[RMDB]
RNA sequence: GGGAACGACUCGAGUAGAGUCGAAAAUAGAGGUGGCAACUGCAUAAUUUGCAAGAAAUUGUUGGCUGAAGAUCAUACCGAUGAUAUUCUUGCAAGUUAUGCAGUUGCUGCCUCAAGCUUGCUGCCUCGUUAUCGAUUCAUUCGUGAAUCGAUAACGAAAAGAAACAACAACAACAAC
Reactivity to DMS in 0.01 (KOAc 150mM, MgCl2 10mM, bicine 150mM(pH8.5), 24C), signal-to-noise 1, nucleotides 027 to 126: u020a150g010a000g020g070u010g020g000c000a000a000c000u000g000c000a020u000a000a000u010u000u000g000c000a000a000g000a010a020a060u000u010g030u020u000g010g020c300u000g000a210a080g030a150u010c090a040u000a200c000c010g000a010u000g000a010u000a100u010u010c000u010u000g000c010a000a000g000u000u000a000u000g000c050a000g000u000u000g020c010u000g030c000c010u000c030a000a040g010c160u020u000g000c070u000g020c020c030u030

This 177-nucleotide RNA was probed chemically with DMS. DMS adducts were read by reverse transcription with MarathonRT. The RNA was probed in 150 mM KOAc, 10 mM MgCl2 and 150 mM bicine (pH 8.5) at 24 C.